Source information: Structure probing data (2A3) for a 177-nucleotide construct. The 2A3 profile rests on 695 reads. Conditions: 150 mM KOAc, 10 mM MgCl2 and 150 mM bicine (pH 8.5), 24 C. Source: RMDB library RFM100, as collected in RNAgym.
RNA sequence: GGGAACGACUCGAGUAGAGUCGAAAACAUUCCGCUGAGUGUUUUUGGAUGGGGGUGUACUGGUCUCGACAGGGCGGACAAAGGUGCGCAGGCAACUCGUCAGGCGAUCGACGUUAAUGAAGCAAAUGCAGGGAUCGUAUUUCGAUACGAUCCCUGCAAAAGAAACAACAACAACAAC
Reactivity to 2A3 in 0.01 (KOAc 150mM, MgCl2 10mM, bicine 150mM(pH8.5), 24C), signal-to-noise 1, nucleotides 027 to 126: c070a070u060u000c060c030g040c190u110g040a090g020u010g080u000u010u020u110u070g070g020a060u090g030g040g000g020g000u000g000u030a040c030u020g070g000u000c000u010c050g000a020c020a180g030g000g000c060g020g000a000c070a020a130a000g100g040u070g030c080g030c010a000g060g000c000a020a030c010u000c010g060u020c060a000g020g020c000g010a110u000c000g000a010c000g040u110u020a050a020u180g060a000a010g000c010a020a020a020u020